[RMDB]
RNA sequence: GGGAACGACUCGAGUAGAGUCGAAAAUUUUUAGCGUAUACGACUAUCCUAGGUAGUGAGUUCUUAAAGUAGGCAUUCCUGCGGACUCUCCACACUUUCUUACAGUUAAACUUCGUAUAUAGUCGGGCCCUGCCUCGAUAUUCGUAUCGAGGCAGGGAAAAGAAACAACAACAACAAC
Reactivity to 2A3 in 0.01 (KOAc 150mM, MgCl2 10mM, bicine 150mM(pH8.5), 24C), signal-to-noise 2, nucleotides 027 to 126: u220u180u030u030u090a110g060c020g010u060a050u000a150c010g060a000c000u070a020u070c040c010u070a110g040g000u060a020g010u050g020a010g050u010u000c050u190u220a190a090a000g050u030a040g010g170c130a180u110u090c050c000u010g030c000g100g040a060c000u030c000u030c080c000a050c000a010c060u120u140u110c000u040u080a080c100a200g150u090u110a050a140a010c010u050u020c020g060u010a010u000a000u020a000g040u020c030g000g000g010
Notes
The record gives the reactivity of an RNA of 177 nucleotides to 2A3. 2A3 is a SHAPE reagent: it acylates the 2'-hydroxyl of flexible nucleotides of all four kinds. The data come from the RNA Mapping Database (RMDB), library OK1LIB.